RNA sequence: GGGAACGACUCGAGUAGAGUCGAAAACAUAAACUCCUUUCUUGUGUAUGCCGGGCCGGUGAUUCUUGUAUACAUUCUUGCUGGUUUUGUUACCAUUAUUAUCCAUUCUAAAAUUCUUACAUGUAUACCCUCCAUCCUACUUCGGUAGGAUGGAGGGAAAAGAAACAACAACAACAAC
Reactivity to 2A3 in 0.01 (KOAc 150mM, MgCl2 10mM, bicine 150mM(pH8.5), 24C), signal-to-noise 2, nucleotides 027 to 126: c050a010u290a030a060a060c030u090c020c000u110u140u140c010u090u090g010u000g040u040a020u130g040c010c000g080g000g000c000c000g000g120u050g050a100u050u000c030u060u040g050u000a090u010a000c000a040u000u000c000u070u140g030c040u000g020g000u000u000u250u030g120u140u180a030c000c000a000u000u050a110u110u000a050u110c000c020a080u000u120c110u100a160a030a220a220u070u030c070u190u130a090c020a020u200g070u130a080u080a030

This 177-nucleotide RNA was probed chemically with 2A3. Reactivities are rounded to 0.1 and cut off at 0 and 3. The 2A3 profile rests on 524 reads. The reactions ran in a buffer of 150 mM KOAc, 10 mM MgCl2 and 150 mM bicine (pH 8.5), at 24 C.